[RMDB]
RNA sequence: GGGAACGACUCGAGUAGAGUCGAAAAGGCGGCCAUUCUUGUGAAUGGACUAAACACUGGUGUUCAUAUUAAUAUGCUCUAUGAGCACAUUAAGCCCCUAUUGAUUUAUCCACGCUUUUAAACAAAACCUCUAUUUACAUUUCGAUGUAAAUAGAGGAAAAGAAACAACAACAACAAC
Reactivity to DMS in 0.01 (KOAc 150mM, MgCl2 10mM, bicine 150mM(pH8.5), 24C), signal-to-noise 4, nucleotides 027 to 126: g020g010c030g000g010c000c010a010u000u000c000u010u010g020u010g010a030a030u000g010g000a110c090u000a060a160a120c090a080c220u000g000g010u010g010u000u000c060a060u000a120u000u000a010a020u000a030u000g000c010u000c010u010a140u010g010a020g020c000a010c030a010u000u000a020a050g000c070c020c020c030u010a140u000u000g000a070u000u000u000a030u000c020c040a070c040g010c030u000u000u000u000a040a080a120c120a040a070a090a110
Reactivity to 2A3 in 0.01 (KOAc 150mM, MgCl2 10mM, bicine 150mM(pH8.5), 24C), signal-to-noise 6, nucleotides 027 to 126: g010g020c020g010g020c010c010a020u050u030c040u220u300g110u140g080a020a010u020g000g010a010c030u030a020a070a010c070a020c090u080g030g000u020g000u040u050c030a010u060a030u180u080a080a080u100a090u220g020c010u000c030u080a070u220g000a000g000c000a000c000a010u060u070a050a030g040c000c000c000c000u040a120u110u110g090a100u020u060u190a060u060c040c000a060c030g010c030u030u100u040u200a060a130a010c050a010a100a080a050